[RMDB]
RNA sequence: GGGAACGACUCGAGUAGAGUCGAAAAGAUAUGGAUCCUGGCCCAGCAACAGCUCCUGGGUCGGAAACGACCCGGAGACAUGCUGAUGACAGGAUCCUAAGUCAAAACUGCUUGUUCGCAAGCAGAAUCUUUCUGUAAACUUCGGUUUACAGAAAGAAAAAGAAACAACAACAACAAC
Reactivity to DMS in 0.01 (KOAc 150mM, MgCl2 10mM, bicine 150mM(pH8.5), 24C), signal-to-noise 3, nucleotides 027 to 126: g000a030u000a300u000g000g000a020u000c000c010u000g020g000c040c230c000a030g010c000a030a060c250a220g010c010u010c010c000u010g090g000g010u000c000g010g000a060a090a180c010g000a020c010c000c010g010g000a010g000a010c070a140u000g010c000u000g020a100u000g000a040c010a010g000g000a010u010c000c000u000a010a090g000u000c040a120a050a180a250c010u000g010c000u000u000g010u010u020c230g030c020a010a010g020c000a000g000a130a110
Reactivity to 2A3 in 0.01 (KOAc 150mM, MgCl2 10mM, bicine 150mM(pH8.5), 24C), signal-to-noise 3, nucleotides 027 to 126: g030a040u070a040u170g020g020a010u000c010c010u010g010g000c030c020c000a000g000c010a000a200c030a230g030c020u060c050c100u300g000g000g020u000c010g000g000a080a080a010c020g000a010c000c020c000g020g000a030g030a010c010a020u070g000c000u020g040a210u110g040a040c010a000g010g000a000u000c000c000u010a020a000g020u020c030a000a040a210a210c020u030g000c000u030u000g050u130u150c300g030c200a000a030g000c000a020g020a020a060